[RMDB]
RNA sequence: GGGAACGACUCGAGUAGAGUCGAAAAGAUAUGGACAUUGCAAUUUGUCAGGUACCGAGAACUAUUACAUCGGAAACGAUGUAACGAAUUCUUUGGUACCUUGGAUUUAAUUGCAAUGUCCUAAGUCGUCUUAGGUAGAGUUCGCUCUACCUAAGACAAAAGAAACAACAACAACAAC
Reactivity to DMS in 0.01 (KOAc 150mM, MgCl2 10mM, bicine 150mM(pH8.5), 24C), signal-to-noise 1, nucleotides 027 to 126: g010a140u030a300u030g010g000a010c010a000u010u000g010c010a010a000u000u000u000g010u000c000a030g000g000u000a010c000c000g010a000g020a020a010c070u000a300u010u000a000c000a020u000c000g000g010a140a110a290c020g020a000u000g000u000a000a020c140g000a060a150u000u000c000u010u000u010g090g020u000a000c000c010u000u020g010g020a040u000u010u000a000a010u000u000g000c000a000a000u000g000u000c000c000u000a010a050g020u000c110
Reactivity to 2A3 in 0.01 (KOAc 150mM, MgCl2 10mM, bicine 150mM(pH8.5), 24C), signal-to-noise 2, nucleotides 027 to 126: g050a050u160a060u250g000g020a010c000a000u020u000g020c010a010a010u000u000u000g010u020c000a000g000g000u000a000c000c000g010a010g000a020a010c080u080a030u090u000a020c000a010u010c020g000g000a080a040a030c020g020a000u010g000u010a000a000c030g150a100a300u030u030c040u050u220u300g010g010u000a000c000c000u000u010g000g010a010u000u300u300a030a010u030u000g000c020a010a000u000g000u000c000c000u000a010a010g000u030c030
The record gives the reactivity of an RNA of 177 nucleotides to DMS and 2A3.
Source: RMDB library TTRINS, as collected in RNAgym.
Values cover nucleotides 27 to 126.
For DMS the reverse transcriptase was MarathonRT.
For 2A3, 3,530 sequencing reads were counted.